[RMDB]
RNA sequence: GGGAACGACUCGAGUAGAGUCGAAAAUGUCACACAGUAGCGAGGGAUGCAAUUAAUUGCAUCUACACCAAGCUCAAGGCAUGGAUUUCGACUAGUGUCGAGUCGUUCCCACUCGCUACGCCCACAACCUUUCGUAGACUUUCGAGUCUACGAAAGGAAAAGAAACAACAACAACAAC
Reactivity to DMS in 0.01 (KOAc 150mM, MgCl2 10mM, bicine 150mM(pH8.5), 24C), signal-to-noise 1, nucleotides 027 to 126: u000g030u010c040a040c140a160c300a080g020u010a020g030c050g000a180g000g000g000a000u000g020c010a010a010u000u000a080a080u010u010g000c010a010u020c000u000a040c080a170c090c030a070a180g020c000u010c070a070a060g000g030c040a080u000g000g000a190u000u010u000c000g000a000c000u010a070g020u030g000u000c010g000a000g010u000c000g020u000u010c040c000c000a010c000u020c040g020c030u000a040c100g010c000c000c000a060c120a060a250